[RMDB]
Overview:
This 170-nucleotide RNA was probed chemically with 2A3 and DMS. DMS adducts were read by reverse transcription with MarathonRT. The RNA was probed in 150 mM KOAc, 10 mM MgCl2 and 150 mM bicine (pH 8.5) at 24 C. For 2A3, 5,833 sequencing reads were counted.
RNA sequence: GGGAACGACUCGAGUAGAGUCGAAAAUCUGCUUAUUUUGGAACUGUAAUGUACCAAAAUAUCCUAAUAAUGCAAUUGUAUGCAGGUUUGACACACGUGUGCAUUCUGAGUUCAAUUUGCCAGGUUGAUGGCCUUCGUUUCGACGAAGGCAAAAGAAACAACAACAACAAC
Reactivity to 2A3 in 0.01 (KOAc 150mM, MgCl2 10mM, bicine 150mM(pH8.5), 24C), signal-to-noise 5, nucleotides 027 to 129: u010c010u050g010c040u090u030a000u000u030u010u020g020g010a010a050c020u020g050u270a100a160u200g010u060a080c000c000a010a000a020a000u050a060u020c030c040u110a230a080u300a120a110u230g030c030a000a090u110u090g020u080a030u020g040c060a000g050g010u030u080u020g170a180c000a000c000a000c070g120u110g030u020g170c000a020u040u000c000u070g070a040g020u000u080c010a010a050u090u000u070g020c010c010a060g060g000u020u020g050a140u100g090
Reactivity to DMS in 0.01 (KOAc 150mM, MgCl2 10mM, bicine 150mM(pH8.5), 24C), signal-to-noise 2, nucleotides 027 to 129: u060c070u040g020c070u020u060a040u000u000u000u000g040g040a130a020c020u010g010u090a070a080u070g000u020a000c000c020a060a030a030a020u020a050u060c060c040u030a080a090u000a110a120u020g020c000a060a030u030u040g000u000a050u040g000c060a120g030g070u000u070u000g000a150c080a080c120a000c210g070u040g070u020g040c050a000u000u050c040u000g010a150g040u040u030c040a060a030u040u030u030g010c000c150a070g010g060u100u020g000a130u010g000